Annotation:
Chemical mapping of a 177-nucleotide RNA with 2A3 and DMS. For DMS the reverse transcriptase was MarathonRT. The RNA was probed in 150 mM KOAc, 10 mM MgCl2 and 150 mM bicine (pH 8.5) at 24 C. 2A3 adducts were read by reverse transcription with SuperScript II with manganese. The 2A3 profile rests on 1,859 reads.
[RMDB]
RNA sequence: GGGAACGACUCGAGUAGAGUCGAAAAUGCAUCAUGAAGAGUAGACAGAGAUUCUGGCGGUUGAGGGUUUCUUCGUAGAGGUUGAUCGAUUCUUAAUGUCCUGUGGAUUUUAAGUUCCCAAAACUGUUCAUAAUUGAACCUUCGGGUUCAAUUAUGAAAAAGAAACAACAACAACAAC
Reactivity to 2A3 in 0.01 (KOAc 150mM, MgCl2 10mM, bicine 150mM(pH8.5), 24C), signal-to-noise 4, nucleotides 027 to 126: u050g020c010a020u020c020a050u080g050a050a050g000a010g080u080a020g050a050c060a010g090a000g020a080u140u040c030u070g060g000c050g100g000u070u080g070a080g000g040g010u040u080u010c000u040u030c000g060u040a030g010a040g100g040u010u030g050a100u030c020g020a030u080u030c000u020u100a110a020u080g030u090c020c050u080g050u110g090g000a030u040u020u010u040a040a030g010u000u010c000c010c000a030a060a010a040c070u070g020u030
Reactivity to DMS in 0.01 (KOAc 150mM, MgCl2 10mM, bicine 150mM(pH8.5), 24C), signal-to-noise 1, nucleotides 027 to 126: u000g020c010a080u000c020a060u060g010a050a090g010a070g000u010a000g000a110c070a140g020a090g000a030u020u000c050u000g000g000c030g000g000u000u010g000a020g010g000g020u030u020u020c040u000u010c100g000u000a070g000a080g000g040u000u000g000a070u020c050g000a090u020u000c000u050u000a090a040u000g000u000c020c010u000g010u000g000g040a070u000u000u040u020a010a130g000u000u020c000c000c000a090a060a030a080c120u000g000u030